An RNA of 177 nucleotides, treated with DMS and 2A3 and read out base by base. The DMS profile rests on 688 reads. Source: RMDB library OK2TST, as collected in RNAgym. The RNA was probed in 150 mM KOAc, 10 mM MgCl2 and 150 mM bicine (pH 8.5) at 24 C. DMS adducts were read by reverse transcription with MarathonRT.
[RMDB]
RNA sequence: GGGAACGACUCGAGUAGAGUCGAAAAGUCGCAAUGGACGGAACCUGUAACGGACUCCAGAACUAUUCCGCCAUGCUGCGAGAUAGCGUGGGUGGACGAGCUACAAACCUCAUUAGCGCAGAUAAUGCCUGGCAAACCAAUUCGUUGGUUUGCCAGGAAAAGAAACAACAACAACAAC
Reactivity to DMS in 0.01 (KOAc 150mM, MgCl2 10mM, bicine 150mM(pH8.5), 24C), signal-to-noise 1, nucleotides 027 to 126: g020u000c020g010c030a110a030u000g000g000a030c110g040g000a050a110c220c060u000g000u010a070a180c010g000g000a050c070u000c040c030a110g000a140a120c030u000a060u010u000c020c000g010c010c080a040u010g000c120u000g020c030g010a080g040a040u000a030g000c100g010u010g030g010g000u010g010g000a050c040g000a120g020c050u010a000c140a020a100a130c060c020u010c030a040u000u010a100g030c000g010c020a150g010a050u050a090a130u000g000
Reactivity to 2A3 in 0.01 (KOAc 150mM, MgCl2 10mM, bicine 150mM(pH8.5), 24C), signal-to-noise 1, nucleotides 027 to 126: g100u000c000g000c050a040a080u030g030g060a010c020g020g020a030a050c000c100u040g040u040a090a020c010g070g080a040c010u020c000c010a030g030a060a000c040u060a040u180u050c010c000g000c010c030a110u160g010c070u040g000c010g000a160g020a070u070a000g050c050g040u020g010g000g140u030g100g000a020c040g020a010g130c000u020a060c020a010a050a030c000c000u030c000a040u010u070a040g010c030g030c020a000g000a110u160a130a050u190g050